[RMDB]
RNA sequence: GGGAACGACUCGAGUAGAGUCGAAAACACGUUCGACUGCAUCGUCGAGACAAUCCGGUUGUCCGCCGAAGGCCGCCUGCGACUCCCCGAACGUGUCCAGCGUUACCUGGUCGGCCGCAUCAAGUCCCCUCAGUGAUGCGUUCGCGCAUCACUGAGGAAAAGAAACAACAACAACAAC
Reactivity to DMS in 0.01 (KOAc 150mM, MgCl2 10mM, bicine 150mM(pH8.5), 24C), signal-to-noise 1, nucleotides 027 to 126: c020a090c170g000u000u010c010g000a070c020u000g030c190a170u050c030g010u050c010g040a050g090a070c020a000a210u020c120c110g000g000u000u000g000u020c000c060g010c010c020g010a140a080g000g000c020c040g000c000c000u000g000c040g030a100c040u000c000c030c000c020g000a090a110c030g030u000g010u000c000c020a030g000c010g010u010u000a150c070c000u000g000g010u000c010g030g050c000c050g000c080a050u020c150a060a000g020u070c010c000
Reactivity to 2A3 in 0.01 (KOAc 150mM, MgCl2 10mM, bicine 150mM(pH8.5), 24C), signal-to-noise 3, nucleotides 027 to 126: c100a000c020g080u060u060c010g040a030c010u070g050c080a120u030c040g130u020c020g010a010g030a060c040a000a060u080c040c050g080g000u020u040g040u030c010c000g000c000c000g080a080a040g080g020c030c010g010c000c020u030g010c060g050a090c040u030c000c020c010c010g030a070a020c060g030u050g120u120c010c050a000g000c020g050u050u050a070c030c000u020g040g070u040c000g010g000c020c010g030c010a070u100c050a020a060g040u080c050c010